[RMDB]
RNA sequence: GGGAACGACUCGAGUAGAGUCGAAAACGCUGGGAUACGGACACUCUAUCAACAGCUACUGAAGCGCGCACGGUAGACAUGAUAGACUGAAGUAUCCUGUGCUGAAGCGCGCACGGCAACCGAAAGGUGCGGGAAGUCAGCAGUUCGCUGCUGACAAUCCCUAUGAGGAAUUCGUUCCUCAUAGGGAAAAAGAAACAACAACAACAAC
Reactivity to 2A3 in 0.01 (KOAc 150mM, MgCl2 10mM, bicine 150mM(pH8.5), 24C), signal-to-noise 5, nucleotides 027 to 156: c020g000c010u050g000g000g000a010u000a010c000g040g070a040c070a050c160u030c010u000a000u020c050a160a150c080a250g050c000u010a000c010u030g080a280a060g000c000g000c000g000c000a010c020g000g010u010a000g060a100c090a210u300g000a000u000a000g020a010c070u120g050a230a020g020u000a000u000c000c000u000g000u010g000c000u020g020a090a030g000c010g000c000g000c010a000c000g010g000c010a000a020c010c000g050a080a020a020g010g010u020g020c000g010g030g040a100a080g000u000c000a000g010c000a000g000u030u110c190g090c180u010g000c000u000g000a000c000a000a010
Reactivity to DMS in 0.01 (KOAc 150mM, MgCl2 10mM, bicine 150mM(pH8.5), 24C), signal-to-noise 2, nucleotides 027 to 156: c050g000c010u000g060g000g000a040u000a000c010g010g030a200c120a080c120u000c010u050a010u000c000a140a180c090a170g010c000u000a030c010u000g010a010a080g050c000g070c040g000c000a300c050g000g010u000a000g010a130c030a250u000g010a020u000a020g000a070c040u010g020a170a230g040u010a010u000c000c000u010g010u000g000c000u020g000a030a030g020c010g030c020g030c000a300c030g010g040c020a080a070c010c010g000a160a180a200g040g020u000g000c000g000g010g030a120a170g020u000c020a020g020c010a020g020u000u000c300g020c020u000g020c000u000g000a040c020a070a040